[RMDB]
RNA sequence: GGGAACGACUCGAGUAGAGUCGAAAAACGCGAGGAUUCGUCCUCGCGUACAUAAGUGAGUUCGGCGGAUAGCUGCCUAAGUGAGUUCGCCGGAUAGCUGCCAAGCACAUAGUUUCGACUAUGUGAAUUCUACGUUUUCUUUCGAGAAAACGUAGAAAAAAGAAACAACAACAACAAC
Reactivity to 2A3 in 0.01 (KOAc 150mM, MgCl2 10mM, bicine 150mM(pH8.5), 24C), signal-to-noise 3, nucleotides 027 to 126: a000c000g010c000g000a000g000g010a000u020u090c170g070u040c050c000u000c000g000c000g000u020a000c000a070u200a040a020g020u020g070a210g040u010u000c010g000g000c010g000g020a010u020a030g020c020u060g100c050c160u100a080a010g000u020g100a220g050u000u000c000g000c020c000g010g010a000u000a000g020c010u050g060c000c020a030a000g130c010a010c000a010u010a000g010u030u090u090c210g100a020c000u010a000u000g000u000g000a000a040
Reactivity to DMS in 0.01 (KOAc 150mM, MgCl2 10mM, bicine 150mM(pH8.5), 24C), signal-to-noise 4, nucleotides 027 to 126: a010c000g010c000g020a020g000g000a040u000u030c230g020u000c000c000u000c000g000c000g020u000a010c130a080u010a090a020g010u010g000a160g020u000u000c020g000g000c010g000g000a020u000a300g000c010u010g000c210c150u000a080a010g010u000g000a120g020u000u000c010g020c010c030g030g000a000u010a270g000c010u000g010c050c030a100a110g010c020a010c000a010u010a010g000u000u000u010c230g000a050c000u000a010u000g010u000g000a040a080